[RMDB]
RNA sequence: GGGAACGACUCGAGUAGAGUCGAAAACGCACUAUGUAUUGCCGAAGCAAAGCUUACAGCAAGCCGUCACUGUUAUUUCGGCAGUUUGCACACAUCCUGGCUCAUAAAGGAAAUUAUCAAUAAGAUAACUCUUCCCUCAUUUCGAUGAGGGAAGAGUAAAAGAAACAACAACAACAAC
Reactivity to DMS in 0.01 (KOAc 150mM, MgCl2 10mM, bicine 150mM(pH8.5), 24C), signal-to-noise 2, nucleotides 027 to 126: c160g010c060a100c270u000a070u010g020u020a040u000u000g000c000c020g030a010a020g010c130a060a100a080g000c090u000u020a080c150a070g030c090a030a050g040c010c080g000u020c130a070c090u010g010u030u000a130u000u000u000c020g000g000c010a030g020u020u000u000g050c050a080c050a080c140a140u000c010c040u000g000g040c060u000c050a100u000a100a040a100g000g000a030a090a040u010u010a000u020c040a050a120u000a060a120g010a110u000a050
Reactivity to 2A3 in 0.01 (KOAc 150mM, MgCl2 10mM, bicine 150mM(pH8.5), 24C), signal-to-noise 1, nucleotides 027 to 126: c000g050c000a030c060u050a030u280g090u060a070u020u130g000c000c000g030a000a000g000c060a020a040a070g040c030u080u030a060c110a060g010c030a130a000g000c020c010g160u110c000a000c190u020g050u130u110a160u130u080u010c000g020g000c000a010g000u020u040u020g080c060a040c000a020c030a080u070c010c010u030g110g000c000u040c120a060u160a100a160a000g010g070a030a090a020u050u040a080u030c000a060a070u170a180a070g000a030u000a020
The record gives the reactivity of an RNA of 177 nucleotides to DMS and 2A3. For DMS, 916 sequencing reads were counted. For DMS the reverse transcriptase was MarathonRT.